[RMDB]
An RNA of 177 nucleotides, treated with 2A3 and DMS and read out base by base. High DMS reactivity at an A or C suggests that its Watson-Crick edge is free. Source: RMDB library M2PK50, as collected in RNAgym. Conditions: 150 mM KOAc, 10 mM MgCl2 and 150 mM bicine (pH 8.5), 24 C. For 2A3 the reverse transcriptase was SuperScript II with manganese. Reactivities are given for positions 27 through 126. The DMS profile rests on 2,965 reads.

RNA sequence: GGGAACGACUCGAGUAGAGUCGAAAAGUGCAGCAGUUCGCUGCUGCACAAAAGGCAUCGUAUCAUUGCUACGAAGCCAAACUAGAAACUAGAAAGCAGUGAAAAGACACUUCUUCGGAAGUGUCAAGUCCCACUAUUAGUUCGCUAAUAGUGGGACAAAAGAAACAACAACAACAAC
Reactivity to 2A3 in 0.01 (KOAc 150mM, MgCl2 10mM, bicine 150mM(pH8.5), 24C), signal-to-noise 5, nucleotides 027 to 126: g000u000g000c000a010g010c000a000g000u040u140c180g050c120u000g000c000u000g000c000a000c000a010a070a000a000g010g000c010a020u020c010g000u010a010u130c010a020u010u030g010c000u010a000c000g010a040a010g000c000c000a030a010a010c030u040a050g170a080a120a020c030u040a040g140a080a100a000g020c010a000g000u010g050a030a050a050a050g000a000c000a000c000u010u010c000u020u090c240g060g000a010a000g000u000g000u000c000a000a000
Reactivity to DMS in 0.01 (KOAc 150mM, MgCl2 10mM, bicine 150mM(pH8.5), 24C), signal-to-noise 3, nucleotides 027 to 126: g000u000g010c000a010g010c000a010g020u000u010c280g010c020u020g010c000u000g030c000a000c010a020a020a110a090g020g010c000a200u000c010g000u000a020u000c020a020u000u000g010c020u000a010c000g020a040a070g030c010c000a050a050a090c210u010a070g000a150a040a110c180u000a110g020a050a060a050g000c010a010g020u000g010a170a110a110a110g010a010c000a000c000u000u000c000u000u020c210g010g000a010a010g020u000g000u000c000a000a060